[RMDB]
RNA sequence: GGGAACGACUCGAGUAGAGUCGAAAAGGCUAUGAGUCGUGUCCGUCGGCGUAGCCGACAACAUGCCCAGGUAGCCCAGACCUUCAAGGCUACGGUGCGUUGCGACGCACGGUCUGAUUCUUCACAAAGUAGUCCCGAGUCUUCGGACUCGGGACAAGACAUUAUUUAGGUUCGCCUAAAUAAUGUCAAAAGAAACAACAACAACAAC
Reactivity to DMS in 0.01 (KOAc 150mM, MgCl2 10mM, bicine 150mM(pH8.5), 24C), signal-to-noise 1, nucleotides 027 to 156: g000g030c020u000a070u010g000a060g010u000c030g020u000g010u010c040c050g010u010c010g080g030c010g060u010a140g060c000c030g020a180c060a050a030c040a040u010g010c020c010c020a100g020g010u000a040g000c000c030c170a110g010a090c040c020u000u000c050a090a220g000g010c000u020a030c050g030g010u000g010c020g000u000u000g020c210g020a180c000g020c020a020c010g000g010u010c000u010g000a250u000u000c000u000u000c110a160c110a090a140a190g020u000a170g000u000c020c010c010g030a040g000u010c030u000u010c300g030g010a030c000u000c010g000g000g010a010c010a010a050
Reactivity to 2A3 in 0.01 (KOAc 150mM, MgCl2 10mM, bicine 150mM(pH8.5), 24C), signal-to-noise 3, nucleotides 027 to 156: g010g000c040u050a060u210g030a000g020u010c000g030u040g120u060c050c020g000u020c010g010g000c220g120u200a060g020c010c010g040a000c010a020a030c030a050u130g010c020c000c050a010g070g000u010a010g010c000c030c050a030g010a020c000c000u000u010c020a020a000g000g010c090u010a000c000g000g000u010g000c000g010u000u060g040c200g060a000c010g000c000a000c000g000g010u000c000u010g010a020u070u040c050u100u090c100a100c070a190a150a080g050u100a030g000u040c000c000c010g010a000g000u000c020u030u110c220g110g000a020c000u000c020g000g000g000a000c000a000a000
Chemical mapping of a 207-nucleotide RNA with DMS and 2A3. For DMS the reverse transcriptase was MarathonRT. The RNA was probed in 150 mM KOAc, 10 mM MgCl2 and 150 mM bicine (pH 8.5) at 24 C. The 2A3 profile rests on 1,733 reads. For 2A3 the reverse transcriptase was SuperScript II with manganese.